[RMDB]
An RNA of 177 nucleotides, treated with DMS and 2A3 and read out base by base. For DMS, 1,836 sequencing reads were counted. For 2A3 the reverse transcriptase was SuperScript II with manganese. In probing experiments dimethyl sulfate is read out at A N1 and C N3, which are open when not base-paired. It was measured as part of the RMDB library RFM100.
RNA sequence: GGGAACGACUCGAGUAGAGUCGAAAAAGCCGAUACGUCGGCAUGAGCCCUCGGAGGACUCCAUUUGUUUUGAUGAUGGAUUCUUAAGCUCCAUCAUCGUCUCAAAUGAGUCUUCAGAGGGUUCUAAGCAGGGUAGGAUAUUCGUAUCCUACCCUGCAAAAGAAACAACAACAACAAC
Reactivity to DMS in 0.01 (KOAc 150mM, MgCl2 10mM, bicine 150mM(pH8.5), 24C), signal-to-noise 1, nucleotides 027 to 126: a160g000c000c000g010a000u000a140c270g000u000c020g000g030c000a020u060g000a000g010c000c010c000u010c000g040g000a000g000g010a000c000u000c040c120a000u010u030u010g000u000u000u030u000g030a010u000g020a020u000g060g030a010u050u050c200u060u090a150a300g020c210u000c000c000a020u000c020a000u010c000g000u010c000u000c000a000a000a000u000g000a000g010u000c000u000u000c000a050g000a060g030g000g000u000u000c000u000a040a040
Reactivity to 2A3 in 0.01 (KOAc 150mM, MgCl2 10mM, bicine 150mM(pH8.5), 24C), signal-to-noise 3, nucleotides 027 to 126: a000g010c010c000g010a010u020a070c230g090u020c010g010g000c010a020u060g000a000g000c000c000c000u000c010g020g000a020g020g000a000c000u080c130c010a000u000u000u000g020u000u020u010u020g000a000u000g000a000u010g000g020a010u080u070c070u140u200a120a050g040c030u000c000c000a000u000c000a000u000c010g000u000c000u000c000a010a010a020u000g000a010g000u010c000u000u000c000a000g000a000g000g000g000u000u000c000u000a020a000